[RMDB]
RNA sequence: GGGAACGACUCGAGUAGAGUCGAAAAAAGAUAUGGAUGUAUUCCGAAUGCCACAGGGAGCUCCGUAAGGGUCGGAAACGACCUAUCGGAGCAUCGAUCUGUGGAGGUAGAAUACAUCCUAAGUCAAGACUUAGAUAUAGUUCGCUAUAUCUAAGUCAAAAGAAACAACAACAACAAC
Reactivity to 2A3 in 0.01 (KOAc 150mM, MgCl2 10mM, bicine 150mM(pH8.5), 24C), signal-to-noise 6, nucleotides 027 to 126: a000a020g010a010u020a010u040g000g010a000u000g000u010a010u020u010c180c030g070a200a080u040g010c000c000a000c000a000g010g000g000a020g000c000u000c010c000g010u040a270a300g080g000g000u000c000g000g000a010a000a010c000g000a000c000c000u010a040u030c010g010g000a000g000c000a000u030c000g000a000u000c000u000g000u010g000g010a010g020g040u030a010g010a010a000u000a000c000a000u000c000c000u000a000a000g000u000c030a070a130
Reactivity to DMS in 0.01 (KOAc 150mM, MgCl2 10mM, bicine 150mM(pH8.5), 24C), signal-to-noise 5, nucleotides 027 to 126: a120a090g000a010u000a030u020g000g000a010u000g000u000a010u000u000c020c020g000a090a060u020g000c010c000a010c000a010g000g000g000a010g030c000u000c010c000g010u010a060a300g010g000g010u000c000g030g000a010a010a040c010g000a010c000c000u000a050u000c010g020g010a020g030c000a050u000c200g000a010u010c000u000g010u000g000g000a010g000g000u010a090g000a020a010u000a010c010a010u000c000c000u000a000a040g000u000c010a140a150